[RMDB]
RNA sequence: GGGAACGACUCGAGUAGAGUCGAAAAAGAGCUUUGGUACUGACGGCCCACGAUCCACGACCAAAGAGCUUUGGAGGUGGAUAGAACCUGAGAUCUCUUGAGGAUCAGAGCACCGUGAGGGGGGGUGUGCCAUAUGAGGAUUCGUCCUCAUAUGGCAAAAAGAAACAACAACAACAAC
Reactivity to 2A3 in 0.01 (KOAc 150mM, MgCl2 10mM, bicine 150mM(pH8.5), 24C), signal-to-noise 4, nucleotides 027 to 126: a000g070a010g010c020u030u040u030g030g020u060a070c030u070g070a040c040g060g010c020c020c020a060c010g040a040u010c000c000a020c040g120a050c000c010a020a000a000g210a050g070c100u040u030u040g030g020a070g060g030u020g010g010a020u030a080g070a030a050c020c000u050g010a030g020a100u030c010u010c040u100u140g080a140g070g000a010u030c010a000g000a000g040c020a010c040c020g020u080g010a090g010g000g010g010g000g000g000u070g020
Reactivity to DMS in 0.01 (KOAc 150mM, MgCl2 10mM, bicine 150mM(pH8.5), 24C), signal-to-noise 4, nucleotides 027 to 126: a090g010a060g020c010u010u010u020g000g000u000a060c050u000g020a090c120g010g020c040c010c040a110c090g000a060u010c010c020a040c090g010a290c020c030a020a020a040g020a130g010c120u000u000u010g010g000a040g010g000u010g000g000a050u010a060g000a080a090c060c020u000g000a110g000a050u000c030u010c020u040u020g000a130g000g000a040u010c040a130g020a110g000c060a050c090c020g010u010g010a060g000g010g020g000g010g000g000u000g000
Source: RMDB library OK1LIB, as collected in RNAgym.
The record gives the reactivity of an RNA of 177 nucleotides to 2A3 and DMS.
For 2A3, 3,406 sequencing reads were counted.
The DMS profile rests on 9,066 reads.